[RMDB]
The record gives the reactivity of an RNA of 177 nucleotides to 2A3 and DMS.
Conditions: 150 mM KOAc, 10 mM MgCl2 and 150 mM bicine (pH 8.5), 24 C.
For DMS the reverse transcriptase was MarathonRT.
The 2A3 profile rests on 2,689 reads.
Source: RMDB library OK2TRN, as collected in RNAgym.
RNA sequence: GGGAACGACUCGAGUAGAGUCGAAAAGCGAAGCUAACGCACUGGCUCACAUCAGCGUUCUGGAGGCGUGGAGCCUGAAUGAUAAUCAUUACAAUGACAAGACCGAUGGUGCGGCACUGGCAAUGGACCACUGUUCACAGUUCGCUGUGAACAGUGGAAAAGAAACAACAACAACAAC
Reactivity to 2A3 in 0.01 (KOAc 150mM, MgCl2 10mM, bicine 150mM(pH8.5), 24C), signal-to-noise 3, nucleotides 027 to 126: g030c030g080a060a050g020c060u050a100a040c020g000c010a020c110u070g020g010c010u020c040a070c010a130u040c010a020g030c000g030u040u000c010u050g120g090a040g000g000c080g000u090g030g160a000g000c000c010u030g030a030a070u070g050a040u130a170a040u100c010a020u030u080a070c050a060a170u090g070a020c040a050a080g030a040c010c030g070a040u070g060g080u070g000c020g030g000c030a020c100u020g050g000c000a020a160u070g040g030a020
Reactivity to DMS in 0.01 (KOAc 150mM, MgCl2 10mM, bicine 150mM(pH8.5), 24C), signal-to-noise 3, nucleotides 027 to 126: g020c040g010a080a130g010c120u000a080a080c090g010c020a160c050u010g000g020c020u020c030a080c120a130u000c070a090g020c100g010u010u000c030u010g000g020a110g010g010c030g000u000g000g020a160g010c020c030u010g010a070a020u010g000a120u020a130a120u010c020a050u000u010a120c160a080a120u010g010a060c090a100a090g000a130c040c030g010a100u010g000g010u000g010c100g000g000c070a020c070u020g000g000c030a030a060u010g010g000a270